Conditions: 150 mM KOAc, 10 mM MgCl2 and 150 mM bicine (pH 8.5), 24 C.
An RNA of 177 nucleotides, treated with DMS and 2A3 and read out base by base.
For DMS the reverse transcriptase was MarathonRT.
Reactivities are given for positions 27 through 126.
[RMDB]
RNA sequence: GGGAACGACUCGAGUAGAGUCGAAAACUGGCGUCGUCCGGCUCCCUCGACCGCACCGGAGCGCUAGAAAAGGUCCUCGGACUUUCUUCUAUCUCCGAAGCCGGUUUGAGGCCCGGCGAAACGCGGGCAGAACGUAUUUGUUCGCAAAUACGUUCUGAAAAGAAACAACAACAACAAC
Reactivity to DMS in 0.01 (KOAc 150mM, MgCl2 10mM, bicine 150mM(pH8.5), 24C), signal-to-noise 3, nucleotides 027 to 126: c030u000g010g020c020g020u000c020g000u000c010c000g010g000c010u010c110c010c000u000c010g000a020c000c020g000c040a230c190c020g020g000a020g000c050g000c010u000a010g000a000a000a030a010g000g000u000c000c020u010c300g030g000a000c010u000u000u010c160u000u000c000u000a010u020c000u000c010c010g010a180a170g000c230c040g020g000u010u000u020g020a020g030g000c250c000c000g000g000c010g010a020a030a010c010g030c000g020g000g000
Reactivity to 2A3 in 0.01 (KOAc 150mM, MgCl2 10mM, bicine 150mM(pH8.5), 24C), signal-to-noise 3, nucleotides 027 to 126: c020u030g100g010c010g010u010c000g060u090c010c000g000g010c060u300c050c000c000u000c010g010a020c010c000g010c030a060c140c020g000g000a000g010c070g010c050u010a000g010a010a020a000a000g010g000u000c030c000u050c220g110g010a010c000u050u000u040c040u040u000c020u100a300u300c010u050c000c000g000a020a000g030c060c030g010g040u000u020u250g000a000g000g000c010c000c000g020g000c000g000a000a020a010c010g000c000g000g010g000